[RMDB]
RNA sequence: GGGAACGACUCGAGUAGAGUCGAAAACUGGCGUCGUUCGCGACGCCAGAAAUACUAAGACCGAAGCUUAGAUGGCCGACACUUCCCUUGGGCGCAAAUCAAAAACCGGUCUGUUCGCAGACCGGAACCAUGCUUGUCAGUUCGCUGACAAGCAUGGAAAAGAAACAACAACAACAAC
Reactivity to 2A3 in 0.01 (KOAc 150mM, MgCl2 10mM, bicine 150mM(pH8.5), 24C), signal-to-noise 2, nucleotides 027 to 126: c000u000g030g000c010g000u030c000g000u050u040c130g010c030g100a010c030g060c000c000a010g010a020a000a000u100a040c020u030a000a050g030a050c010c110g140a100a010g030c020u060u050a010g010a130u100g170g040c000c000g020a020c010a110c230u030u020c050c000c000u060u140g050g000g010c070g010c030a050a080a090u100c050a050a030a060a010a090c010c000g000g000u030c010u000g000u000u060c270g020c080a000g000a000c000c000g000g000a000a010
Reactivity to DMS in 0.01 (KOAc 150mM, MgCl2 10mM, bicine 150mM(pH8.5), 24C), signal-to-noise 2, nucleotides 027 to 126: c000u000g000g000c000g070u010c000g010u000u000c120g000c020g020a000c010g020c010c000a000g000a020a060a090u000a030c060u000a100a040g020a060c010c100g030a080a190g000c010u000u000a020g020a230u020g020g030c000c010g000a090c030a090c130u000u000c000c020c060u000u020g000g000g000c000g000c220a070a090a040u020c160a080a030a050a230a160c040c000g020g000u010c030u000g000u000u010c150g020c000a010g010a010c010c020g000g000a000a040